[RMDB]
Structure probing data (2A3 and DMS) for a 207-nucleotide construct.
It was measured as part of the RMDB library RNAMAK.
The RNA was probed in 150 mM KOAc, 10 mM MgCl2 and 150 mM bicine (pH 8.5) at 24 C.
DMS adducts were read by reverse transcription with MarathonRT.
RNA sequence: GGGAACGACUCGAGUAGAGUCGAAAAUCCCGCGGUUCGCCGCGGGAAAAAAGAUAUGGACCGCCCAUGUUGUCAGCUUCAUGCUCGGAAACGAGCAAGAAGCUUGGAUUUACAUGUAACAAGUCCUAAGUCAAAAACUGAGUGUUCGCACUCAGAACGAUAAAAUCAUGUUCGCAUGAUUUUAUCGAAAAGAAACAACAACAACAAC
Reactivity to 2A3 in 0.01 (KOAc 150mM, MgCl2 10mM, bicine 150mM(pH8.5), 24C), signal-to-noise 4, nucleotides 027 to 156: u010c010c000c010g000c010g000g050u080u080c220g070c100c010g000c060g020g020g000a080a000a000a010a010a020g040a010u050a020u040g000g000a010c000c020g000c030c030c000a000u000g000u020u020g000u020c010a010g000c000u030u000c010a030u040g000c000u000c000g010g040a090a120a100c000g010a000g000c000a000a010g010a000a000g000c010u000u060g020g010a010u180u130u200a010c010a000u020g060u110a190a100c060a170a030g000u000c010c000u030a120a020g060u040c030a050a040a020a100a150c010u000g010a000g010u010g050u090u210c270g070c120a000c010u000c000a000g010a020a030
Reactivity to DMS in 0.01 (KOAc 150mM, MgCl2 10mM, bicine 150mM(pH8.5), 24C), signal-to-noise 1, nucleotides 027 to 156: u000c000c000c010g070c030g020g000u000u000c250g030c000c010g020c010g110g000g000a000a000a050a050a080a080g000a060u020a250u000g010g010a030c010c070g030c280c100c000a040u010g030u000u020g000u000c030a030g000c010u000u000c000a150u010g000c000u000c010g020g030a140a070a230c010g020a020g060c030a030a030g000a050a000g000c010u000u000g030g020a080u000u000u000a020c020a000u000g010u000a090a100c070a120a080g000u000c000c010u000a120a110g010u020c050a070a090a090a060a090c040u000g020a020g010u010g010u000u010c120g030c020a000c000u010c000a000g030a080a150